[RMDB]
RNA sequence: GGGAACGACUCGAGUAGAGUCGAAAAGUUUAUGAUGAUUUCCACAUUUCACGACGGUCAACUGCGUUUUUCGAAUGUUUAUCGAUUAACUUUGAUGAUAUUUCGCCUGUGACAGGGCGUGGUACUGAGCAAAAGAUUAUCGGUUCGCCGAUAAUCAGCAUAGGGCAGUAUUCGUACUGCCCUAUGCAAAAGAAACAACAACAACAAC
Reactivity to DMS in 0.01 (KOAc 150mM, MgCl2 10mM, bicine 150mM(pH8.5), 24C), signal-to-noise 2, nucleotides 027 to 156: g010u000u010u010a060u040g010a130u000g000a090u000u000u000c020c040a100c040a130u010u000u020c010a090c030g010a090c080g010g000u010c050a040a070c050u010g000c060g010u010u010u010u000u000c010g000a050a070u010g000u000u000u000a110u000c010g020a100u000u000a060a120c070u000u000u010g020a130u000g010a040u000a060u000u000u000c040g030c030c010u000g040u000g010a250c220a300g020g000g010c020g060u000g000g030u010a040c050u010g050a180g030c060a090a070a090a090g000a020u000u000a020u000c010g060g020u000u000c300g050c010c000g010a000u000a010a010u010c010a110
Reactivity to 2A3 in 0.01 (KOAc 150mM, MgCl2 10mM, bicine 150mM(pH8.5), 24C), signal-to-noise 5, nucleotides 027 to 156: g030u070u090u100a160u170g060a030u040g010a040u030u080u030c030c010a030c010a040u110u140u120c090a070c070g060a020c050g040g000u040c050a080a070c070u110g050c080g050u020u020u020u080u100c020g020a050a050u070g040u090u130u120a070u080c060g010a050u020u040a040a050c060u040u040u100g050a050u050g020a030u040a070u050u100u050c010g000c020c010u060g010u030g050a030c030a040g000g020g010c010g010u020g000g000u010a050c060u060g070a040g070c050a000a040a110a050g010a000u020u020a000u010c000g000g070u030u050c210g020c050c000g010a010u010a020a000u030c000a000
Structure probing data (DMS and 2A3) for a 207-nucleotide construct.
The reactions ran in a buffer of 150 mM KOAc, 10 mM MgCl2 and 150 mM bicine (pH 8.5), at 24 C.
For 2A3 the reverse transcriptase was SuperScript II with manganese.
For DMS the reverse transcriptase was MarathonRT.
For 2A3, 3,456 sequencing reads were counted.